Structure probing data (2A3 and DMS) for a 207-nucleotide construct.
For DMS, 6,907 sequencing reads were counted.
For DMS the reverse transcriptase was MarathonRT.
[RMDB]
RNA sequence: GGGAACGACUCGAGUAGAGUCGAAAACAGGCACAAGCAGGGUCUCAGUUUGCUGCUCUGUUAAAUGGAGGCUGUGCAGAGGGUGUAGUGUUUUCUAUUGCUGUGGGUUAUUUAGCAUGUGUGUAUGACCUGGAGCUCAAGCAACACGUGCACACUGUCAACGCAAAUAGUUCGCUAUUUGCGUUGAAAAAGAAACAACAACAACAAC
Reactivity to 2A3 in 0.01 (KOAc 150mM, MgCl2 10mM, bicine 150mM(pH8.5), 24C), signal-to-noise 5, nucleotides 027 to 156: c020a010g030g020c010a020c010a040a030g020c010a040g050g000g070u050c060u010c100a070g030u060u090u060g050c050u020g010c000u020c030u120g030u050u150a060a130a050u100g050g000a020g020g000c050u040g010u050g070c040a010g030a060g030g050g000u030g010u040a060g010u010g040u060u040u030u080c050u070a120u110u100g040c030u010g010u060g110g010g030u060u020a100u070u160u060a110g010c040a050u070g040u030g000u000g010u080a050u100g040a030c020c030u040g050g030a030g020c020u040c110a070a070g020c020a030a020c010a020c020g040u020g020c020a010c000a010c030u050g030
Reactivity to DMS in 0.01 (KOAc 150mM, MgCl2 10mM, bicine 150mM(pH8.5), 24C), signal-to-noise 3, nucleotides 027 to 156: c040a070g000g010c010a100c080a050a110g020c030a080g010g030g010u000c040u030c040a140g000u000u000u000g030c070u000g020c020u000c070u030g030u000u000a040a090a080u010g020g010a090g020g020c040u010g010u000g040c030a110g010a090g020g010g050u000g010u000a080g030u000g020u000u000u000u010c020u000a120u020u000g010c000u000g040u010g020g010g020u000u000a140u000u000u020a130g020c070a070u010g020u010g060u020g040u000a090u020g010a080c050c020u010g000g000a160g030c090u000c070a050a130g020c140a090a080c040a070c050g020u000g000c000a100c060a040c070u000g020